The record gives the reactivity of an RNA of 177 nucleotides to DMS and 2A3.
[RMDB]
RNA sequence: GGGAACGACUCGAGUAGAGUCGAAAAUUAAGCAGAAUGGUGGUCAUGCCGAAGCCCAUCAGGCCCAGCGGUGCCGGAUUAGCCAACUUAGUGUUGCCCAUAAUUCCUCAAAAAUCAUCAUCGAAUGGAAUACGUCCCAUUUCGAUGGGACGUAUUCAAAAGAAACAACAACAACAAC
Reactivity to DMS in 0.01 (KOAc 150mM, MgCl2 10mM, bicine 150mM(pH8.5), 24C), signal-to-noise 2, nucleotides 027 to 126: u000u010a080a150g030c050a080g000a090a140u000g000g030u000g010g000u000c100a060u010g040c010c010g030a090a130g020c050c000c030a100u010c160a050g000g020c050c050c020a080g020c090g000g010u000g010c060c050g020g000a100u020u000a090g020c080c020a030a060c100u000u010a070g030u030g020u000u000g000c010c050c040a100u000a050a160u020u000c010c010u030c120a040a030a030a030a080u010c070a030u000c050a050u000c050g000a070a060u000g010
Reactivity to 2A3 in 0.01 (KOAc 150mM, MgCl2 10mM, bicine 150mM(pH8.5), 24C), signal-to-noise 1, nucleotides 027 to 126: u120u020a060a010g010c060a010g050a250a060u130g060g040u050g010g010u090c060a030u110g000c000c030g060a070a020g040c050c010c020a020u090c030a010g070g000c020c000c000a020g040c000g050g000u060g000c000c000g030g020a030u020u030a040g040c000c010a010a020c070u050u010a070g080u030g030u240u040g040c010c000c030a010u050a030a060u070u060c000c000u090c080a080a080a070a050a130u100c040a020u030c000a030u050c080g070a100a040u090g070
It was measured as part of the RMDB library OK2TRN.